This 207-nucleotide RNA was probed chemically with DMS and 2A3. The reactions ran in a buffer of 150 mM KOAc, 10 mM MgCl2 and 150 mM bicine (pH 8.5), at 24 C.
[RMDB]
RNA sequence: GGGAACGACUCGAGUAGAGUCGAAAAAAUCGCACUCAGAGGCGUGCGAAGCGGCGCUAAUCGCAGAAUACGGGCACGAUUACGUUGCGGCUUUCUGGCGCGAAGAAAUAACCACCAGAAAGCUGCUCGUACUCAUCGACCACCUGCCAGAAAAUUCCUGAAGGUAAAAAUUCGUUUUUACCUUCAGAAAAGAAACAACAACAACAAC
Reactivity to DMS in 0.01 (KOAc 150mM, MgCl2 10mM, bicine 150mM(pH8.5), 24C), signal-to-noise 1, nucleotides 027 to 156: a070a050u020c010g040c000a040c010u010c090a230g030a240g020g020c260g020u010g020c010g030a040a120g030c040g020g010c040g000c060u000a070a070u000c000g000c050a070g000a110a120u000a070c080g010g040g000c020a130c030g010a060u000u010a020c050g000u010u010g050c010g000g000c010u000u000u000c010u000g000g000c000g000c030g010a000a040g000a100a090a130u000a010a050c060c000a020c000c000a010g010a040a020a030g020c000u000g030c000u000c000g030u000a030c100u000c040a050u000c050g020a120c010c010a120c050c020u000g040c000c020a160g010a070a070a120a300u000u020c010
Reactivity to 2A3 in 0.01 (KOAc 150mM, MgCl2 10mM, bicine 150mM(pH8.5), 24C), signal-to-noise 4, nucleotides 027 to 156: a000a010u040c010g010c000a030c010u070c050a070g050a070g140g060c040g000u010g000c010g010a050a010g040c030g060g000c020g020c130u100a080a050u140c070g000c030a020g060a080a050u190a100c060g000g030g000c080a010c110g000a010u030u000a000c030g060u090u060g000c010g000g000c000u000u000u000c000u010g000g000c040g000c070g100a090a020g070a060a160a020u200a050a040c030c020a000c010c000a000g000a000a010a000g010c010u010g000c000u010c000g000u000a010c030u030c050a040u050c030g050a070c000c010a020c010c010u030g030c030c000a050g130a080a160a030a050u150u060c050